[RMDB]
RNA sequence: GGGAACGACUCGAGUAGAGUCGAAAAUUGGCGAAUGCCUGUGGAUCUACAUUUGUUCCGGGUUCGAGACCCGUCAGAGCCCGGCUCUGUAGCUCAAUGGUAGAGCGGUGUAUUCACAUAAACUUGUAAAAGACACGUGCCUUCGGGCACGUGUCAACAUUGAGAGUUGGUUCGCCAACUCUCAAUGAAAAGAAACAACAACAACAAC
Reactivity to 2A3 in 0.01 (KOAc 150mM, MgCl2 10mM, bicine 150mM(pH8.5), 24C), signal-to-noise 1, nucleotides 027 to 156: u090u020g040g000c060g130a180a070u170g010c010c030u040g040u060g010g010a000u000c010u120a040c030a100u120u080u090g000u150u020c040c000g010g000g000u010u000c030g010a060g020a140c010c020c010g010u040c070a070g000a000g000c000c000c000g000g000c000u000c000u010g100u020a020g040c010u010c070a060a040u130g160g010u160a090g000a010g020c050g000g000u010g010u020a020u020u040c000a000c000a100u110a100a130a160c050u100u070g030u130a020a080a070a060g000a000c000a020c000g000u000g000c020c000u000u090c240g010g000g010c020a010c000g000u000g020u010c000a000a000
Reactivity to DMS in 0.01 (KOAc 150mM, MgCl2 10mM, bicine 150mM(pH8.5), 24C), signal-to-noise 1, nucleotides 027 to 156: u000u020g020g010c050g010a080a030u000g000c070c060u050g010u010g000g020a030u000c020u010a030c030a040u000u010u000g020u000u000c030c000g000g030g000u020u000c050g010a220g010a220c020c020c080g000u020c030a190g080a060g000c020c020c000g040g000c010u000c010u000g060u000a130g030c030u010c020a070a100u010g020g050u000a100g010a090g010c020g020g000u010g020u000a080u020u000c040a000c000a050u020a040a090a080c110u000u000g000u000a100a100a050a190g020a050c010a010c070g040u000g020c010c020u060u000c300g030g030g070c000a000c000g000u010g000u010c000a000a080
Structure probing data (2A3 and DMS) for a 207-nucleotide construct. 2A3 adducts were read by reverse transcription with SuperScript II with manganese. The RNA was probed in 150 mM KOAc, 10 mM MgCl2 and 150 mM bicine (pH 8.5) at 24 C. High DMS reactivity at an A or C suggests that its Watson-Crick edge is free. For DMS the reverse transcriptase was MarathonRT. For 2A3, 550 sequencing reads were counted. The DMS profile rests on 2,003 reads.